An RNA of 177 nucleotides, treated with 2A3 and DMS and read out base by base. DMS adducts were read by reverse transcription with MarathonRT. It was measured as part of the RMDB library OK1LIB. For DMS, 12,703 sequencing reads were counted. Conditions: 150 mM KOAc, 10 mM MgCl2 and 150 mM bicine (pH 8.5), 24 C. For 2A3, 17,071 sequencing reads were counted.
RNA sequence: GGGAACGACUCGAGUAGAGUCGAAAAGACACACUUCGCAGAUGACCUCCUCGUUGGUGCGUGUCGGUAAUGUUGUCAGUCACAGGCAACAGUUAACGAUCUGCCUAAAUAAAAAGAGAAGAACAAAGCUCAUUAUUAUAUUCGUAUAAUAAUGAGCAAAAGAAACAACAACAACAAC
Reactivity to 2A3 in 0.01 (KOAc 150mM, MgCl2 10mM, bicine 150mM(pH8.5), 24C), signal-to-noise 9, nucleotides 027 to 126: g050a000c010a010c000a010c060u090u170c070g000c020a010g000a100u040g030a080c000c000u020c010c010u060c050g110u070u140g030g000u070g000c040g010u050g030u030c010g000g030u090a090a060u030g010u010u010g000u000c020a030g150u140c070a060c040a130g010g000c000a010a000c000a020g040u010u060a020a020c030g010a010u000c000u030g000c000c000u170a170a160a080u250a060a090a040a030a000g140a010g030a180a040g040a090a020c050a100a070a040
Reactivity to DMS in 0.01 (KOAc 150mM, MgCl2 10mM, bicine 150mM(pH8.5), 24C), signal-to-noise 5, nucleotides 027 to 126: g010a050c060a040c050a040c010u010u020c160g000c000a040g020a060u010g000a090c050c010u010c040c010u000c060g000u040u020g010g010u010g010c040g010u010g000u010c020g000g030u010a070a080u000g000u000u000g010u000c010a080g010u030c260a110c240a100g000g010c010a010a010c010a030g010u000u020a030a070c010g000a020u010c080u000g010c020c150u010a030a050a090u060a040a070a100a060a050g020a090g000a070a090g020a040a090c110a070a070a100